[RMDB]
RNA sequence: GGGAACGACUCGAGUAGAGUCGAAAAGAUCACGCGCUGCACCUCGAGCGCGGCCGCGCACGCGCUCGCGUGGCCGACGUACGUGUGGCCGUGCUGAAAGAAGCCCGAGCCGUCGACGAUCGUCCGACCUAAAAUGCAGCUUCGGCUGCAUUUUAGGAAAAGAAACAACAACAACAAC
Reactivity to DMS in 0.01 (KOAc 150mM, MgCl2 10mM, bicine 150mM(pH8.5), 24C), signal-to-noise 2, nucleotides 027 to 126: g000a100u010c010a060c050g020c180g030c010u000g010c030a000c050c130u030c160g020a160g000c080g000c020g000g030c000c020g020c040g030c010a090c150g000c060g010c060u000c040g020c010g030u000g020g010c010c000g040a100c010g040u000a060c130g010u000g020u000g010g020c000c000g000u020g000c090u030g000a040a080a120g000a110a130g020c000c000c000g030a110g010c060c020g010u000c010g010a060c030g000a140u010c080g000u000c010c010g000a160